RNA sequence: GGGAACGACUCGAGUAGAGUCGAAAAUAUUGGCAUCGGCCAAAAACUCGUACUGUACCAGCUGACCAUCUUCAUAGCGGGUAAUGCCGCCAUAGUAGACAUCCGUGCGCAAUGCGAACUUUUGUAAUGGGGAUUUUUUCAUUUCAAUCCACGAGCCAAAUUGUACAGGGUUCGCCCUGUACAAUUUAAAAGAAACAACAACAACAAC
Reactivity to 2A3 in 0.01 (KOAc 150mM, MgCl2 10mM, bicine 150mM(pH8.5), 24C), signal-to-noise 3, nucleotides 027 to 156: u120a020u000u040g030g000c060a110u110c190g200g000c040c000a050a060a000a030a040c070u070c070g040u050a050c080u070g020u060a020c020c010a010g010c060u060g030a050c060c010a060u090c020u090u050c020a070u060a060g000c010g010g000g030u030a060a050u070g060c000c010g000c010c000a020u060a060g080u030a010g020a050c010a090u070c080c030g020u050g000c030g010c030a000a030u060g020c010g050a050a070c030u000u050u080u130g100u110a060a080u120g060g010g000g040a110u030u050u030u020u100u090c060a100u020u080u160c010a010a030u000c010c020a030c080g030a000g020c010c010
Reactivity to DMS in 0.01 (KOAc 150mM, MgCl2 10mM, bicine 150mM(pH8.5), 24C), signal-to-noise 1, nucleotides 027 to 156: u010a070u000u010g010g010c010a100u010c140g020g080c110c010a050a030a060a070a110c090u010c060g040u010a080c050u000g040u000a040c010c020a090g020c050u010g040a080c040c020a140u000c030u020u000c050a050u010a070g010c000g020g000g030u020a160a090u000g020c020c000g000c010c030a040u000a080g040u010a080g020a040c050a100u000c010c030g020u000g000c050g040c020a050a040u020g000c020g000a020a060c030u000u000u000u000g010u000a050a060u000g000g020g010g000a000u000u020u000u000u010u010c070a090u000u010u020c090a040a050u000c000c000a080c010g010a100g000c020c060

Structure probing data (2A3 and DMS) for a 207-nucleotide construct. The DMS profile rests on 2,294 reads. The data come from the RNA Mapping Database (RMDB), library OK3TST. Values cover nucleotides 27 to 156.